[RMDB]
RNA sequence: GGGAACGACUCGAGUAGAGUCGAAAAGCGAGUGGGUCCUAGAGAUUGAAAACACCAGCGAAGCCAACAACUAUGGUACUGGGGGCACUUGAGGGGUAGGGGUACGAGGUGGAGGGCUGGCAGGAUCCUCUCUAUUGGAAUUCGUUCCAAUAGAGAGAAAAGAAACAACAACAACAAC
Reactivity to 2A3 in 0.01 (KOAc 150mM, MgCl2 10mM, bicine 150mM(pH8.5), 24C), signal-to-noise 4, nucleotides 027 to 126: g050c010g010a030g060u040g020g040g030u000c000c020u040a040g010a030g020a160u130u230g050a080a080a020a010c050a020c000c020a000g040c060g090a090a010g010c030c010a050a060c040a050a060c090u150a120u150g070g000u100a070c040u080g010g000g000g070g020c070a030c110u080u090g060a030g000g030g010g030u120a060g010g020g000g010u040a050c080g020a050g000g050u060g040g070a090g030g020g000c070u040g040g020c010a020g020g040a020u030c020
Reactivity to DMS in 0.01 (KOAc 150mM, MgCl2 10mM, bicine 150mM(pH8.5), 24C), signal-to-noise 3, nucleotides 027 to 126: g030c080g000a080g040u000g000g020g000u000c010c020u000a070g000a120g010a100u030u000g000a090a060a120a130c100a080c030c040a040g000c120g010a090a140g000c030c010a060a050c110a060a090c120u000a080u000g010g000u010a050c080u000g000g000g050g030g040c090a030c100u010u000g000a120g000g020g000g010u000a070g000g020g010g000u010a060c120g000a080g000g010u010g020g010a090g000g010g020c090u020g000g010c100a060g000g000a070u020c070
The record gives the reactivity of an RNA of 177 nucleotides to 2A3 and DMS.